[RMDB]
RNA sequence: GGGAACGACUCGAGUAGAGUCGAAAAGGGUAGAUCUUCGGAUCUACCCAAAAGGAGCAACCAACGAAGGAAGUGCUAGCAUAAGCGUGCAGCCUAGCACUAAAAGGUUCCGCUUCGGCGGAACCAACAAAUAGAGGAUGUUCGCAUCCUCUAUUUGAAAAGAAACAACAACAACAAC
Reactivity to 2A3 in 0.01 (KOAc 150mM, MgCl2 10mM, bicine 150mM(pH8.5), 24C), signal-to-noise 5, nucleotides 027 to 126: g000g000g010u010a000g000a000u030c020u050u060c230g020g000a000u000c000u000a000c000c000c010a000a000a000a000g030g000a060g030c010a010a050c020c010a020a070c110g110a100a040g160g070a080a030g010u010g000c000u020a010g000c030a130u070a300a040g060c060g130u160g070c080a010g010c020c010u010a000g000c000a000c020u030a010a050a010a050g000g000u010u000c000c000g020c010u030u030c170g080g000c000g000g000a000a000c000c000a000a010
Reactivity to DMS in 0.01 (KOAc 150mM, MgCl2 10mM, bicine 150mM(pH8.5), 24C), signal-to-noise 7, nucleotides 027 to 126: g010g010g010u010a000g010a010u000c000u000u020c170g030g010a010u000c000u000a000c000c000c000a010a010a040a060g010g000a060g020c060a070a140c020c040a060a080c160g010a130a110g010g000a130a020g020u000g000c010u000a010g010c190a120u000a070a090g010c060g010u010g020c120a110g010c110c020u000a010g000c010a010c020u000a030a060a090a080g010g010u000u000c000c000g010c000u000u010c180g020g010c000g010g000a000a010c000c010a020a060
Structure probing data (2A3 and DMS) for a 177-nucleotide construct. As a SHAPE reagent, 2A3 marks flexible, mostly unpaired nucleotides at the ribose 2'-OH. Source: RMDB library M2PK50, as collected in RNAgym.